An RNA of 207 nucleotides, treated with DMS and 2A3 and read out base by base.

[RMDB]
RNA sequence: GGGAACGACUCGAGUAGAGUCGAAAAGAGAAUGAGGGACAAAGGUGAGUGAGCGGCAGCACCAACUCUAGAACCCAGCUCUUGUGUAUUCACAAAUAUAGGACCCCUCCACUUGCCAAAACGAGCAGGAUCAAUCAGCUCAGAUGACAGGCAGCAGCUUGUAACUAGGGUUCGCCCUAGUUACAAGAAAAGAAACAACAACAACAAC
Reactivity to DMS in 0.01 (KOAc 150mM, MgCl2 10mM, bicine 150mM(pH8.5), 24C), signal-to-noise 2, nucleotides 027 to 156: g010a140g010a070a080u020g010a080g020g030g000a250c080a090a150a090g010g010u010g000a090g010u000g000a090g000c040g020g000c080a070g000c040a100c030c020a050a140c010u000c070u010a100g030a110a160c010c010c000a160g020c030u000c030u010u000g000u000g030u000a070u000u000c050a090c030a070a100a050u000a070u000a060g000g000a120c020c000c000c000u000c000c050a100c060u000u000g030c030c010a090a070a110a160c080g000a020g010c010a070g010g000a140u000c100a060a090u000c040a060g020c040u010c000a060g000a130u010g010a090c070a020g020g000c070a080g040c030a100g000
Reactivity to 2A3 in 0.01 (KOAc 150mM, MgCl2 10mM, bicine 150mM(pH8.5), 24C), signal-to-noise 2, nucleotides 027 to 156: g040a010g010a040a100u120g000a110g000g030g010a030c080a090a090a030g040g020u040g010a080g020u030g030a040g040c040g040g010c020a020g000c000a030c000c030a040a090c030u050c020u090a060g030a140a060c010c010c000a050g000c020u050c000u070u060g050u030g020u050a110u200u210c050a030c010a030a080a020u240a020u080a130g150g020a130c030c040c030c000u000c040c010a060c020u050u080g000c010c020a000a070a060a000c040g000a000g010c030a020g050g030a040u070c010a020a080u060c010a040g000c020u020c000a020g040a100u080g010a000c060a030g030g020c000a010g000c010a000g020
The reactions ran in a buffer of 150 mM KOAc, 10 mM MgCl2 and 150 mM bicine (pH 8.5), at 24 C. In probing experiments dimethyl sulfate is read out at A N1 and C N3, which are open when not base-paired. Source: RMDB library OK3TST, as collected in RNAgym.